[RMDB]
RNA sequence: GGGAACGACUCGAGUAGAGUCGAAAAUGAGUGGAGUCCGUCAAAGAUAACGCUCAACUCGGGCUUUGAGAUAGAAUUUCUGUCCUACGGCAACCCAAAGGGGCUACAGGGUGAGGGUGUGGACCUGAUUGUCGGUGACGAGUGGGCGUAUUCCGACUGUCAGCUAAUUUUUCGAAAUUAGCUGACAAAAAGAAACAACAACAACAAC
Reactivity to DMS in 0.01 (KOAc 150mM, MgCl2 10mM, bicine 150mM(pH8.5), 24C), signal-to-noise 2, nucleotides 027 to 156: u010g010a080g030u020g010g010a300g010u000c010c030g050u020c140a050a090a110g020a080u000a080a150c000g040c010u010c020a010a090c080u010c050g010g030g000c020u010u000u020g000a080g020a070u000a030g010a150a160u030u010u000c040u000g000u000c020c030u010a070c040g000g020c010a080a070c040c030c060a080a040a180g000g030g070g000c020u000a070c000a070g000g000g040u000g020a090g000g010g020u000g030u010g000g000a090c010c030u010g030a070u010u000g040u000c080g010g040u010g020a110c000g010a040g000u000g020g000g000c030g040u000a180u000u010c000c030g020a300c170
Reactivity to 2A3 in 0.01 (KOAc 150mM, MgCl2 10mM, bicine 150mM(pH8.5), 24C), signal-to-noise 2, nucleotides 027 to 156: u140g010a000g020u050g010g030a080g080u020c070c050g090u050c050a050a030a030g010a030u100a120a020c010g000c000u000c000a010a110c060u000c020g040g060g000c050u110u040u130g080a140g000a030u040a030g060a220a280u060u230u080c000u020g060u060c040c010u030a060c040g000g000c020a060a050c020c020c000a030a070a000g030g000g000g040c030u050a000c050a020g050g000g050u060g040a030g020g030g020u080g000u070g020g030a010c000c020u080g020a080u050u070g020u000c040g000g040u060g010a040c020g010a000g020u030g000g000g000c010g030u000a040u080u010c040c000g010a030c050
An RNA of 207 nucleotides, treated with DMS and 2A3 and read out base by base. The 2A3 profile rests on 838 reads. It was measured as part of the RMDB library OK3TST. 2A3 adducts were read by reverse transcription with SuperScript II with manganese. For DMS the reverse transcriptase was MarathonRT. Conditions: 150 mM KOAc, 10 mM MgCl2 and 150 mM bicine (pH 8.5), 24 C.